[RMDB]
RNA sequence: GGGAACGACUCGAGUAGAGUCGAAAAGAUAUGGAACGGCAAGACAUGCCUGGGUGGUCGGAAACGACCACCGAGGCAACAGCUUGACCGUUCCUAAGUCAAAAGAGUGAGACUUCGGUCUCACUCACGGAACAUAACUGUUCGCAGUUAUGUUCCGAAAAGAAACAACAACAACAAC
Reactivity to 2A3 in 0.01 (KOAc 150mM, MgCl2 10mM, bicine 150mM(pH8.5), 24C), signal-to-noise 3, nucleotides 027 to 126: g010a010u030a030u090g010g000a000a000c000g010g000c010a010a010g030a080c170a270u300g010c000c000u030g130g000g100u000g000g000u010c020g000g000a050a030a030c000g000a000c010c000a000c020c010g000a000g000g020c020a030a020c040a030g030c000u000u010g020a040c000c010g000u000u000c000c010u000a010a000g000u010c010a000a020a130a150g000a010g000u030g020a000g000a010c010u110u150c300g100g000u000c000u010c000a000c000u010c010a000
Reactivity to DMS in 0.01 (KOAc 150mM, MgCl2 10mM, bicine 150mM(pH8.5), 24C), signal-to-noise 4, nucleotides 027 to 126: g000a030u000a290u010g000g000a000a010c000g010g000c000a010a020g000a020c080a300u020g010c000c000u000g000g000g050u000g020g020u000c000g000g000a030a060a140c010g010a010c000c000a000c000c010g000a010g020g020c000a030a040c250a090g000c000u000u000g000a200c000c000g000u000u000c000c000u000a000a060g010u010c020a160a110a170a130g000a020g020u010g010a010g010a020c000u000u020c250g030g000u000c000u000c000a000c000u000c010a010

Overview
The record gives the reactivity of an RNA of 177 nucleotides to 2A3 and DMS. The data come from the RNA Mapping Database (RMDB), library TTRDES. For 2A3, 9,856 sequencing reads were counted. The RNA was probed in 150 mM KOAc, 10 mM MgCl2 and 150 mM bicine (pH 8.5) at 24 C.